[RMDB]
RNA sequence: GGGAACGACUCGAGUAGAGUCGAAAAAGACACGAAUCCAGGCCCUACGGGGCGCAGCAGGCGCGAAAACUCUACAAUGCAGGCAACUGCGAUAGGGGGACAUCGAGUGGCAUCCACCUUGGGUGCCGAUGGAUGUACUGUUCGCAGUACAUCCAUCAAAAGAAACAACAACAACAAC
Reactivity to 2A3 in 0.01 (KOAc 150mM, MgCl2 10mM, bicine 150mM(pH8.5), 24C), signal-to-noise 1, nucleotides 027 to 126: a020g030a010c020a000c090g060a020a020u020c050c010a000g070g000c000c000c000u040a030c120g020g020g010g000c040g000c010a010g030c000a030g000g080c040g000c020g070a030a090a040a000c030u000c000u070a050c070a070a130u200g020c010a020g070g000c040a090a070c070u000g000c020g010a030u110a040g030g020g010g010g000a000c020a070u090c040g060a020g040u110g010g000c000a000u010c000c000a070c080c080u110u140g000g000g020u020g000c040c000
Reactivity to DMS in 0.01 (KOAc 150mM, MgCl2 10mM, bicine 150mM(pH8.5), 24C), signal-to-noise 3, nucleotides 027 to 126: a080g000a080c050a070c080g010a100a120u010c030c030a070g010g040c030c030c020u010a070c090g020g000g000g010c040g050c080a040g000c050a060g000g010c080g030c040g000a030a070a110a090c020u000c010u000a010c090a100a110u010g000c020a030g010g000c250a070a100c010u000g020c010g020a080u000a070g000g000g010g030g000a060c050a070u010c040g000a060g020u000g010g010c000a000u000c000c010a130c160c200u010u000g030g000g000u000g000c020c030